[RMDB]
RNA sequence: GGGAACGACUCGAGUAGAGUCGAAAACACGUGGUCAGCUGAGUAACCAUUCUUCACGUGGGACGCAUCCGAGAGUGGCUGGCCGGCAGUAGCCGAAGCGCGAGCAGCGACAACCCGACAACCGGCGCAAAACGCUUGUGUUCGCACAAGCGUUUUGAAAAGAAACAACAACAACAAC
Reactivity to DMS in 0.01 (KOAc 150mM, MgCl2 10mM, bicine 150mM(pH8.5), 24C), signal-to-noise 1, nucleotides 027 to 126: c050a110c030g020u000g010g010u020c050a080g010c040u000g000a070g000u000a140a130c070c040a100u000u000c030u000u000c050a040c100g010u040g020g020g000a100c120g000c090a050u000c040c030g000a090g000a040g000u000g000g010c030u000g000g000c030c010g000g010c050a090g000u000a090g030c010c000g040a090a120g010c120g000c090g030a070g010c040a110g000c010g020a080c080a040a120c000c020c010g020a080c080a070a070c040c070g000g020c050g020
The record gives the reactivity of an RNA of 177 nucleotides to DMS. The reactions ran in a buffer of 150 mM KOAc, 10 mM MgCl2 and 150 mM bicine (pH 8.5), at 24 C. The data come from the RNA Mapping Database (RMDB), library OK2TRN. For DMS, 957 sequencing reads were counted. For DMS the reverse transcriptase was MarathonRT.